[RMDB]
RNA sequence: GGGAACGACUCGAGUAGAGUCGAAAAAACGCUUCACAACCUGAAAGAAGCGCCUGUUAUCAGGCCGGUUGAUCCAUUUACCGGUGCAGACCUCUGCAAACACCGGGUUGCAGAACAUCGCGACGGACAAGGGAGGAUACCUUCGGGUAUCCUCCAAGAUAAUGUCCAUCUUCGGAUGGACAUUAUCAAAAGAAACAACAACAACAAC
Reactivity to 2A3 in 0.01 (KOAc 150mM, MgCl2 10mM, bicine 150mM(pH8.5), 24C), signal-to-noise 2, nucleotides 027 to 156: a000a000c040g010c010u000u010c040a070c050a130a060c000c000u000g020a060a000a000g010a030a040g000c010g040c000c020u110g010u170u120a150u260c040a000g010g030c010c000g010g030u010u030g050a150u060c040c020a040u100u040u170a110c010c000g010g000u050g010c010a010g050a110c000c060u000c020u030g000c020a020a030a000c040a090c130c070g290g070g000u010u020g010c020a020g000a050a030c030a050u080c040g010c020g080a040c010g030g020a020c030a050a110g050g000g000a000g000g000a000u010a000c000c010u030u160c180g060g000g000u000a000u000c000c000u000c000c000a000a000
Reactivity to DMS in 0.01 (KOAc 150mM, MgCl2 10mM, bicine 150mM(pH8.5), 24C), signal-to-noise 1, nucleotides 027 to 156: a040a020c020g000c010u020u000c020a270c080a060a300c030c020u020g000a130a190a300g000a030a020g000c030g040c030c080u000g020u000u000a140u010c060a040g020g020c060c040g000g010u000u010g030a130u000c070c040a270u010u010u000a060c010c000g000g010u000g000c020a170g010a030c180c090u000c020u010g020c070a100a010a080c020a270c100c140g020g000g060u000u000g050c010a060g010a100a060c070a030u000c020g070c030g000a030c020g010g000a120c110a100a140g010g000g000a000g040g020a010u000a010c000c020u000u000c300g080g060g020u020a010u000c010c010u000c020c000a040a050
Chemical mapping of a 207-nucleotide RNA with 2A3 and DMS.
For 2A3, 1,195 sequencing reads were counted.
High DMS reactivity at an A or C suggests that its Watson-Crick edge is free.
2A3 adducts were read by reverse transcription with SuperScript II with manganese.
As a SHAPE reagent, 2A3 marks flexible, mostly unpaired nucleotides at the ribose 2'-OH.
Conditions: 150 mM KOAc, 10 mM MgCl2 and 150 mM bicine (pH 8.5), 24 C.
DMS adducts were read by reverse transcription with MarathonRT.